[RMDB]
RNA sequence: GGGAACGACUCGAGUAGAGUCGAAAACAUCUAAAGUACGGUUGAUCAUAAGACAUAUCACCAUGUAUGUACCACUGAAGUAAAAGCCUGACUGUCAUUGUUGGAUGUCGCCAAUUGUAAAGCACGGCCAUUGAGGCUAAUUCGUUAGCCUCAAUGGAAAAGAAACAACAACAACAAC
Reactivity to DMS in 0.01 (KOAc 150mM, MgCl2 10mM, bicine 150mM(pH8.5), 24C), signal-to-noise 4, nucleotides 027 to 126: c040a060u010c050u000a060a060a070g010u010a060c050g000g020u000u000g010a060u000c100a080u010a100a140g010a100c060a050u000a040u000c080a060c200c090a060u000g010u000a030u000g010u000a080c050c050a080c140u000g020a050a060g010u020a040a050a110a100g010c040c020u000g010a070c040u000g010u000c100a070u000u000g010u000u000g000g000a090u000g000u000c080g010c050c040a030a080u000u010g000u000a050a090a080g010c100a070c100g000g000
Reactivity to 2A3 in 0.01 (KOAc 150mM, MgCl2 10mM, bicine 150mM(pH8.5), 24C), signal-to-noise 2, nucleotides 027 to 126: c000a030u060c010u180a230a050a010g040u070a040c030g020g040u060u060g050a050u070c040a040u080a080a040g040a040c030a020u070a000u040c010a010c050c020a020u080g030u000a010u030g020u030a070c020c040a020c070u040g050a050a030g020u170a070a080a040a000g000c000c010u040g020a050c020u030g020u100c030a060u010u170g150u130u130g020g030a050u080g000u040c040g030c040c000a070a100u080u190g140u210a080a020a000g070c010a000c080g020g030